[RMDB]
The record gives the reactivity of an RNA of 207 nucleotides to 2A3. The reactions ran in a buffer of 150 mM KOAc, 10 mM MgCl2 and 150 mM bicine (pH 8.5), at 24 C. The data come from the RNA Mapping Database (RMDB), library RNAMAK. For 2A3 the reverse transcriptase was SuperScript II with manganese.
RNA sequence: GGGAACGACUCGAGUAGAGUCGAAAAAAAAACGCUGGGUGAUACCAUAAGCAUCAGGAUCUUUGAUCACACUGAAGCGCGCACGGUGUGGGAGAUCCUAGUGCUUUAAGUAUCACCUGUGCUGAAGCGCGCACGGCAACCGAAAGGUGCGAAAAAACUUAGCUAGUUUGUUCGCAAACUAGCUAAGAAAAGAAACAACAACAACAAC
Reactivity to 2A3 in 0.01 (KOAc 150mM, MgCl2 10mM, bicine 150mM(pH8.5), 24C), signal-to-noise 1, nucleotides 027 to 156: a010a000a000a000a010c030g000c020u040g000g000g000u010g000a000u010a000c010c030a080u050a220a010g000c000a010u040c050a020g000g000a000u040c010u300u180u060g010a000u000c000a010c010a000c010u030g000a170a010g030c030g000c010g000c000a010c020g020g000u000g000u000g010g020g010a030g000a000u010c000c020u010a000g010u000g000c010u000u040u010a070a000g000u010a000u000c000a000c000c000u000g000u010g000c000u020g040a090a030g000c000g000c000g000c010a010c010g000g010c010a000a030c000c000g030a100a050a070g040g000u060g000c040g000a090a040a010a090a000a020